[RMDB]
RNA sequence: GGGAACGACUCGAGUAGAGUCGAAAAGCGAACUUUUAAAGCAGCAUUCUUUUGUAGAUUUUAUUGUCCUUAUUCUUGAGAAACCAGAGAUCAAUAAUUUCCUCCUUAAGAAGUUUAUAGAUGUUGCCUAAAUGGGAAACUUCGGUUUCCCAUUUAGAAAAGAAACAACAACAACAAC
Reactivity to DMS in 0.01 (KOAc 150mM, MgCl2 10mM, bicine 150mM(pH8.5), 24C), signal-to-noise 2, nucleotides 027 to 126: g010c060g020a040a110c040u000u010u010u010a060a120a200g010c010a010g020c010a050u000u000c010u000u000u000u010g000u000a120g000a040u010u000u010u000a020u020u000g000u010c040c030u010u010a110u010u000c050u000u010g010a200g000a100a050a060c180c110a040g000a080g000a040u000c020a020a060u000a030a030u000u000u000c040c020u000c270c050u010u010a020a020g010a050a050g000u000u000u020a080u010a140g020a060u000g000u000u010g000c030
Reactivity to 2A3 in 0.01 (KOAc 150mM, MgCl2 10mM, bicine 150mM(pH8.5), 24C), signal-to-noise 2, nucleotides 027 to 126: g040c030g020a020a080c020u090u030u120u220a080a210a020g010c010a000g030c040a050u030u070c000u070u110u040u070g030u040a010g000a030u010u020u070u060a020u010u040g000u030c000c010u070u070a130u230u090c080u120u300g150a260g030a210a050a030c110c000a040g050a030g020a090u130c010a020a000u020a010a010u060u000u000c030c000u000c020c000u020u010a000a000g000a050a010g040u240u170u190a120u010a050g020a020u050g010u020u010g020c000